[RMDB]
RNA sequence: GGGAACGACUCGAGUAGAGUCGAAAAACGUUGAUCGUGGGGAUGACGCCCGUGGCGUAGUGGUCAUAGAUCCGCCGAAAUAUGGCGCUGCUGCGGGUGGCCAUGGGAACGCGGAGACAGGCCUCCACAUCAGAGCUAGCUUCGGCUAGCUCUGAUGAAAAGAAACAACAACAACAAC
Reactivity to DMS in 0.01 (KOAc 150mM, MgCl2 10mM, bicine 150mM(pH8.5), 24C), signal-to-noise 1, nucleotides 027 to 126: a030c070g070u030u000g000a080u000c070g010u000g020g010g000g000a090u060g000a130c060g000c000c020c040g000u000g000g000c010g040u030a010g040u000g020g020u000c040a000u000a000g010a210u060c030c090g010c240c120g010a040a040a170u000a000u020g000g110c010g010c010u040g020c010u000g000c030g000g030g000u000g000g000c070c000a020u000g020g000g000a050a050c000g110c050g000g000a050g000a120c080a120g030g000c020c010u000c020c020a220
Reactivity to 2A3 in 0.01 (KOAc 150mM, MgCl2 10mM, bicine 150mM(pH8.5), 24C), signal-to-noise 1, nucleotides 027 to 126: a000c020g000u010u070g040a220u080c000g010u010g000g000g000g020a150u150g090a100c010g020c000c010c020g000u000g000g000c020g010u060a020g010u010g200g020u000c000a010u000a010g030a040u050c040c040g020c040c060g100a020a020a000u060a020u010g000g000c040g000c020u030g000c000u000g000c000g000g000g000u000g020g050c040c000a020u040g040g010g060a070a030c050g010c040g060g010a020g010a010c040a030g110g000c010c000u020c010c030a000